Structure probing data (2A3) for a 207-nucleotide construct. The RNA was probed in 150 mM KOAc, 10 mM MgCl2 and 150 mM bicine (pH 8.5) at 24 C. High 2A3 reactivity points to a flexible backbone, as in loops and unpaired stretches. It was measured as part of the RMDB library OK3TST.
RNA sequence: GGGAACGACUCGAGUAGAGUCGAAAAUGUACCAAAGUUCUUGUUAACACGUGUUAAGGCGGAAAUCAAGCGCUUUGAGGGACAACUAGAAGAACAAGACAUUAUUCCAAAAACACACAAGUACUCUAGCAAAAAUACUAGUACCAUUGACCUAGACAACCGUGAACCUUUUCGAAGGUUCACGGUUAAAAGAAACAACAACAACAAC
Reactivity to 2A3 in 0.01 (KOAc 150mM, MgCl2 10mM, bicine 150mM(pH8.5), 24C), signal-to-noise 1, nucleotides 027 to 156: u020g000u030a030c000c000a000a000a000g000u010u030c010u010u040g040u040u030a160a020c070a040c160g100u120g050u110u170a020a020g180g000c030g000g020a000a080a110u020c020a030a020g040c020g020c000u070u010u030g030a100g000g060g000a000c000a140a030c090u080a000g050a130a000g030a140a000c030a110a030g110a030c050a050u000u090a050u300u000c030c010a090a030a000a060a030c060a000c000a000c000a030a030g000u030a030c030u050c010u070a010g000c040a000a100a060a010a050u120a120c010u000a000g050u010a040c010c010a040u030u150g040a010c000c000u030a060g000a100c030